The record gives the reactivity of an RNA of 170 nucleotides to 2A3 and DMS. Reactivities are given for positions 27 through 129. The reactions ran in a buffer of 150 mM KOAc, 10 mM MgCl2 and 150 mM bicine (pH 8.5), at 24 C.

RNA sequence: GGGAACGACUCGAGUAGAGUCGAAAACCAGUGGAGCCGUGGGAUGCUCUUCCCAAUCUGACCUGACCCCUCCCCCAGCGGGUCGCCCAGGAAUGGCGGGACCCCACUUCAGCAGGGUCCGCGUUCCGAACACCAUGGUUCGCCAUGGUGAAAAGAAACAACAACAACAAC
Reactivity to 2A3 in 0.01 (KOAc 150mM, MgCl2 10mM, bicine 150mM(pH8.5), 24C), signal-to-noise 9, nucleotides 027 to 129: c010c000a010g030u050g080g030a020g030c030c040g060u080g000g030g000a060u080g020c020u010c020u050u030c010c000c000a020a080u080c070u100g070a080c020c010u040g150a160c010c000c000c020u070c010c000c000c000c000a000g030c030g000g010g000u000c000g010c010c010c010a030g030g100a010a020u120g300g290c070g000g040g050a060c000c010c000c010a090c020u270u220c060a090g030c050a040g010g000g010u000c000c000g000c010g000u000u000c000c000g000a060a010
Reactivity to DMS in 0.01 (KOAc 150mM, MgCl2 10mM, bicine 150mM(pH8.5), 24C), signal-to-noise 9, nucleotides 027 to 129: c020c010a070g040u000g040g020a060g050c000c040g030u010g010g010g000a090u020g000c070u040c080u000u030c030c030c010a100a090u070c090u020g030a080c060c020u030g020a160c030c000c010c020u040c000c000c000c000c000a170g010c060g000g000g000u020c010g020c010c000c000a150g000g000a000a000u020g090g040c050g000g000g000a040c020c000c010c040a110c100u050u030c180a120g070c140a150g020g020g010u000c000c000g010c020g010u010u010c030c000g000a080a100